[RMDB]
RNA sequence: GGGAACGACUCGAGUAGAGUCGAAAACACAGCCGUGCCAGGUCACGCGAAUCCAGCAGUUCGGCGGCCAGCCGCCCGGUUUCCAGCCCGUAGUCGAUGCCCUCGCCAUUGAGCGGGUUGACGCAGGACGGACAAGAGGGUUCGCCCUCUUGUCCGUAAAAGAAACAACAACAACAAC
Reactivity to DMS in 0.01 (KOAc 150mM, MgCl2 10mM, bicine 150mM(pH8.5), 24C), signal-to-noise 1, nucleotides 027 to 126: c070a060c140a160g000c040c010g000u000g010c020c010a200g010g030u010c000a080c070g020c020g020a040a050u000c080c040a110g020c110a110g000u000u010c060g020g000c030g030g000c030c030a090g030c040c060g000c020c020c000g040g010u000u010u010c040c030a080g000c010c000c010g000u000a090g000u000c020g000a090u000g010c060c050c090u010c110g010c070c020a060u000u000g000a130g000c000g010g000g000u000u000g010a100c130g010c200a120g000g020
About this RNA
The record gives the reactivity of an RNA of 177 nucleotides to DMS. Values are in units of 0.01, from 0 to 300, in steps of 10. The RNA was probed in 150 mM KOAc, 10 mM MgCl2 and 150 mM bicine (pH 8.5) at 24 C. Values cover nucleotides 27 to 126.